[RMDB]
RNA sequence: GGGAACGACUCGAGUAGAGUCGAAAAAUAAGAUUUAGGUGGCAAACUACACUAUUAUACUUUGAUAGUUUUGACAGAACAGCACACCUUUCCGCAAUGUCUGUCUUCCAUUAGAAAGUAUUAGCGCGAGAUAAGCUACUUUCGAGUAGCUUAUCUCAAAAGAAACAACAACAACAAC
Reactivity to DMS in 0.01 (KOAc 150mM, MgCl2 10mM, bicine 150mM(pH8.5), 24C), signal-to-noise 3, nucleotides 027 to 126: a080u000a040a090g000a300u020u000u000a050g010g040u000g010g010c050a110a100a100c120u010a070c070a050c040u000a040u000u000a040u010a070c080u010u000u000g000a080u000a070g010u000u000u010u000g020a050c070a020g000a080a030c130a120g000c010a090c060a060c080c050u010u010u000c070c040g010c100a060a080u010g000u010c000u000g000u000c020u000u000c070c120a040u000u010a080g010a050a030a040g010u000a040u000u000a080g000c230g020c230
Reactivity to 2A3 in 0.01 (KOAc 150mM, MgCl2 10mM, bicine 150mM(pH8.5), 24C), signal-to-noise 2, nucleotides 027 to 126: a000u080a040a050g010a040u030u040u070a020g000g000u020g040g000c080a110a080a060c090u160a040c040a020c090u030a040u190u060a060u060a050c030u130u040u070g020a040u080a030g030u020u000u020u160g000a000c010a010g010a100a040c010a030g030c020a000c000a030c180c130u000u030u000c040c010g000c030a060a060u120g000u030c000u010g020u000c000u030u030c000c000a080u020u060a060g100a130a040a000g050u030a100u040u120a080g070c070g010c040

The record gives the reactivity of an RNA of 177 nucleotides to DMS and 2A3. For DMS, 2,134 sequencing reads were counted. The reactions ran in a buffer of 150 mM KOAc, 10 mM MgCl2 and 150 mM bicine (pH 8.5), at 24 C. Reactivities are given for positions 27 through 126. The 2A3 profile rests on 1,622 reads.